[RMDB]
Annotation:
An RNA of 170 nucleotides, treated with 2A3 and DMS and read out base by base. 2A3 adducts were read by reverse transcription with SuperScript II with manganese. Conditions: 150 mM KOAc, 10 mM MgCl2 and 150 mM bicine (pH 8.5), 24 C. The DMS profile rests on 11,200 reads.
RNA sequence: GGGAACGACUCGAGUAGAGUCGAAAACCGGGGGGUGAUCCACCAGGAGAUGAACGGAAAAAUCACCUCCAGAGGACCCCUUCAGCGAACAGAAGAGACUCCCCUCGAUAGGAGCAAGACCAUAGCGUACCGCCUGAGUUCGCUCAGGCGAAAAGAAACAACAACAACAAC
Reactivity to 2A3 in 0.01 (KOAc 150mM, MgCl2 10mM, bicine 150mM(pH8.5), 24C), signal-to-noise 6, nucleotides 027 to 129: c010c010g000g000g000g000g000g000u040g010a140u000c010c030a050c010c020a060g080g020a090g040a090u100g050a100a040c120g080g070a110a100a020a000a000u000c000a010c000c000u020c020c000a020g020a060g020g030a020c000c000c000c000u010u030c020a010g000c000g020a020a020c010a060g070a110a000g060a050g030a070c000u030c000c010c000c010u090c070g090a120u110a160g050g000a020g000c040a030a000g030a020c000c030a040u080a070g060c040g020u040a050c040
Reactivity to DMS in 0.01 (KOAc 150mM, MgCl2 10mM, bicine 150mM(pH8.5), 24C), signal-to-noise 6, nucleotides 027 to 129: c000c000g030g000g030g030g000g030u030g010a040u020c030c070a300c000c110a210g030g020a090g060a070u070g020a120a130c100g000g000a010a060a030a210a040u040c030a030c010c010u030c000c040a050g030a080g050g020a150c060c050c040c070u010u000c080a100g000c030g020a020a030c020a000g070a110a060g040a080g040a110c040u030c000c000c010c000u010c130g000a110u070a120g030g000a030g030c040a100a080g000a070c010c060a100u000a100g020c000g030u020a060c120